[RMDB]
This 177-nucleotide RNA was probed chemically with 2A3 and DMS. The RNA was probed in 150 mM KOAc, 10 mM MgCl2 and 150 mM bicine (pH 8.5) at 24 C. 2A3 is a SHAPE reagent: it acylates the 2'-hydroxyl of flexible nucleotides of all four kinds. For 2A3, 3,619 sequencing reads were counted.
RNA sequence: GGGAACGACUCGAGUAGAGUCGAAAAUAUGACAGUAUUUGUAAUGCAAUUACAGAGUAACUUGAAAAGUAUUGAAGAAUUAAUAUCACAAAGUCGUUGGUCAUAUAAAAAACCGCGUACAGUCAACGCUUUAAUGCGUAUUCGUACGCAUUAAAGCAAAAGAAACAACAACAACAAC
Reactivity to 2A3 in 0.01 (KOAc 150mM, MgCl2 10mM, bicine 150mM(pH8.5), 24C), signal-to-noise 5, nucleotides 027 to 126: u100a020u040g010a010c010a000g080u080a090u030u040u020g020u020a060a030u200g200c180a110a130u020u000a010c000a000g090a050g090u110a070a020c010u050u100g070a080a070a010a000g050u070a070u140u130g090a100a080g020a000a070u160u140a140a060u130a060u250c050a020c070a120a060a040g020u050c030g120u150u160g000g020u020c010a020u060a000u210a110a110a000a020a000a010c030c020g030c040g030u100a050c040a020g060u060c090a080a040c080
Reactivity to DMS in 0.01 (KOAc 150mM, MgCl2 10mM, bicine 150mM(pH8.5), 24C), signal-to-noise 3, nucleotides 027 to 126: u010a010u020g010a070c000a170g000u060a100u030u000u000g010u000a010a010u000g020c270a100a110u000u000a000c000a070g000a080g000u070a060a020c020u000u000g000a050a140a240a130g020u000a040u010u000g030a090a170g010a130a120u010u030a020a080u010a000u000c080a100c160a090a010a010g010u000c110g010u000u040g020g000u000c010a000u000a030u000a000a070a050a030a050a060c040c000g010c090g000u010a050c140a140g010u000c070a050a100c130
DMS adducts were read by reverse transcription with MarathonRT. Reactivities are given for positions 27 through 126. The DMS profile rests on 4,461 reads.